Notes: Structure probing data (2A3 and DMS) for a 177-nucleotide construct. The data come from the RNA Mapping Database (RMDB), library OK1LIB. Reactivities are given for positions 27 through 126.

RNA sequence: GGGAACGACUCGAGUAGAGUCGAAAAAAAGCCUUUAAAAAGCAUCCGUUAUGCUGGCUGUGGUGCCACAAACCUGUAAUCCCAGCACUUAGAAGGUAGAGGCAAGAUUAUCAGAAAUUCAAGGCCACCCAGGCAGAAGAUUCGUCUUCUGCCUGGGAAAAGAAACAACAACAACAAC
Reactivity to 2A3 in 0.01 (KOAc 150mM, MgCl2 10mM, bicine 150mM(pH8.5), 24C), signal-to-noise 2, nucleotides 027 to 126: a010a000a010g130c070c040u030u050u050a060a260a110a020a000g070c000a040u090c040c020g030u070u120a030u180g040c110u060g010g000c040u060g020u010g010g060u020g080c030c000a060c050a100a210a130c090c010u010g000u130a080a100u110c000c060c030a010g020c000a000c110u080u130a060g060a260a060g200g000u010a010g000a010g080g000c000a030a010g050a050u100u130a020u170c070a000g120a160a030a020u180u050c010a030a020g000g010c090c000a040
Reactivity to DMS in 0.01 (KOAc 150mM, MgCl2 10mM, bicine 150mM(pH8.5), 24C), signal-to-noise 1, nucleotides 027 to 126: a010a100a020g020c040c000u080u020u020a170a070a030a050a170g020c020a100u000c040c100g090u030u050a060u070g030c000u040g000g000c020u020g000u010g000g010u000g020c030c010a030c100a080a070a050c130c000u000g070u060a150a070u000c000c000c000a170g010c080a040c050u000u010a070g000a060a050g020g000u000a180g000a200g000g000c020a120a120g000a030u030u010a010u040c130a040g010a050a050a070u040u000c040a060a080g030g000c020c020a160